[RMDB]
RNA sequence: GGGAACGACUCGAGUAGAGUCGAAAAUGUGUCCUAGGGAAUUGGAAGGUCAUCCUUCACAGGAUCGUGUGGAAGUCCUGCUCGGCGCGGAAGCAUUAAAACCAUUCGAGCUAGUCAAUGCGUGGCGUUACCUCCAGGUUCUUCGGAACCUGGAGAAGUAACAUCGAGGAUUCGUCCUCGAUGUUACAAAAGAAACAACAACAACAAC
Reactivity to 2A3 in 0.01 (KOAc 150mM, MgCl2 10mM, bicine 150mM(pH8.5), 24C), signal-to-noise 4, nucleotides 027 to 156: u140g060u010g020u010c000c020u030a080g040g030g040a090a110u170u130g010g030a050a020g010g020u130c040a080u180c040c040u080u110c060a050c020a070g060g000a060u050c060g050u060g000u040g140g030a050a070g040u030c010c010u020g020c050u030c040g050g000c020g000c040g050g030a030a010g010c020a000u070u210a010a060a010a060c040c020a040u070u140c070g020a010g000c040u040a030g060u060c080a070a060u080g030c050g060u030g010g020c030g030u050u080a060c010c010u000c000c000a000g000g000u000u010c000u010u000c070g090g000a000a000c000c000u000g000g000a000g000a000a000
Reactivity to DMS in 0.01 (KOAc 150mM, MgCl2 10mM, bicine 150mM(pH8.5), 24C), signal-to-noise 2, nucleotides 027 to 156: u010g020u000g020u000c010c010u010a120g030g010g000a090a140u010u000g010g010a100a060g040g010u000c100a180u000c010c000u010u000c070a120c090a040g000g020a040u000c030g040u020g040u010g040g010a090a070g000u000c030c020u010g010c040u010c060g020g020c040g040c050g040g010a080a120g000c050a120u000u000a060a050a090a130c040c030a210u000u000c040g010a040g000c000u000a110g020u010c050a070a090u000g000c070g020u000g010g030c020g000u010u010a110c080c000u000c000c000a030g000g000u010u000c000u000u000c300g090g010a010a010c000c010u010g000g020a000g000a000a070